An RNA of 177 nucleotides, treated with DMS and 2A3 and read out base by base. The data come from the RNA Mapping Database (RMDB), library OK1LIB. The 2A3 profile rests on 4,164 reads. The reactions ran in a buffer of 150 mM KOAc, 10 mM MgCl2 and 150 mM bicine (pH 8.5), at 24 C.

RNA sequence: GGGAACGACUCGAGUAGAGUCGAAAAUAUAUAUGAGUGAGAGAGGUGUGUGGCCCAUCCCGCGGUAAGUAAGUCGUAUCAUACGCCUGUGAUAUGGUCAAAGUGUGCAGUCUGAUGAUCAUAUAUAGUGUAUUAAUUUUUUCGAAAAUUAAUACACAAAAGAAACAACAACAACAAC
Reactivity to DMS in 0.01 (KOAc 150mM, MgCl2 10mM, bicine 150mM(pH8.5), 24C), signal-to-noise 5, nucleotides 027 to 126: u040a050u030a080u020a050u020g000a050g030u000g000a080g000a090g010a060g020g010u000g010u000g020u010g010g010c020c020c030a080u010c020c020c020g020c100g000g000u000a040a060g000u010a080a110g000u000c050g000u010a110u020c040a080u010a060c110g020c050c040u000g010u010g000a040u000a020u000g000g000u010c030a020a100a080g020u010g020u020g010c050a060g000u000c020u010g000a160u010g000a060u010c010a020u000a020u010a070u020a090
Reactivity to 2A3 in 0.01 (KOAc 150mM, MgCl2 10mM, bicine 150mM(pH8.5), 24C), signal-to-noise 4, nucleotides 027 to 126: u120a000u030a000u000a040u080g070a040g040u140g040a080g010a030g000a020g060g010u080g020u020g020u040g080g000c000c010c010a050u030c030c000c010g060c020g010g020u070a040a040g040u020a080a030g030u100c020g020u030a030u060c030a010u050a070c040g020c000c010u000g020u030g050a030u030a030u060g050g020u030c030a030a040a030g050u080g020u040g090c030a020g050u030c030u040g070a100u040g000a030u070c010a000u020a010u050a010u040a110